[RMDB]
RNA sequence: GGGAACGACUCGAGUAGAGUCGAAAAUAACACCACUCCACUGGGCUCGCACAACGCCAAGGCCGCCAGGAGUGUUUUACAUCAUGUCCUGAGCCUACCUUUCCCCCAAAUUCUGGGGCCCACAGCAAGCCAUUAUAGUAUUCGUACUAUAAUGGCUAAAAGAAACAACAACAACAAC
Reactivity to 2A3 in 0.01 (KOAc 150mM, MgCl2 10mM, bicine 150mM(pH8.5), 24C), signal-to-noise 2, nucleotides 027 to 126: u060a020a070c040a030c020c000a040c010u050c000c020a050c070u050g010g030g000c020u030c070g030c010a070c020a140a090c050g000c030c040a080a050g050g010c040c020g100c120c000a030g000g010a010g020u010g030u000u110u010u050a020c020a030u100c020a040u100g160u230c020c000u010g000a000g000c030c000u060a090c050c030u040u080u110c020c000c000c020c010a020a090a050u140u030c040u060g000g050g030g000c020c010c000a030c000a000g050c010a020
Reactivity to DMS in 0.01 (KOAc 150mM, MgCl2 10mM, bicine 150mM(pH8.5), 24C), signal-to-noise 8, nucleotides 027 to 126: u000a080a090c110a130c090c010a090c050u000c030c040a100c120u010g010g000g010c020u010c110g010c070a070c110a080a080c160g010c070c080a080a090g000g010c050c190g010c070c030a060g010g010a190g010u010g000u000u000u010u010a100c180a100u000c060a040u000g010u000c010c010u000g010a120g010c020c040u000a070c050c040u000u000u000c020c000c000c030c050a050a070a120u010u010c100u010g000g000g010g010c020c000c010a060c210a090g010c200a110
This 177-nucleotide RNA was probed chemically with 2A3 and DMS. Reactivities are given for positions 27 through 126. The 2A3 profile rests on 2,206 reads. The data come from the RNA Mapping Database (RMDB), library OK2TRN. For DMS the reverse transcriptase was MarathonRT. The reactions ran in a buffer of 150 mM KOAc, 10 mM MgCl2 and 150 mM bicine (pH 8.5), at 24 C.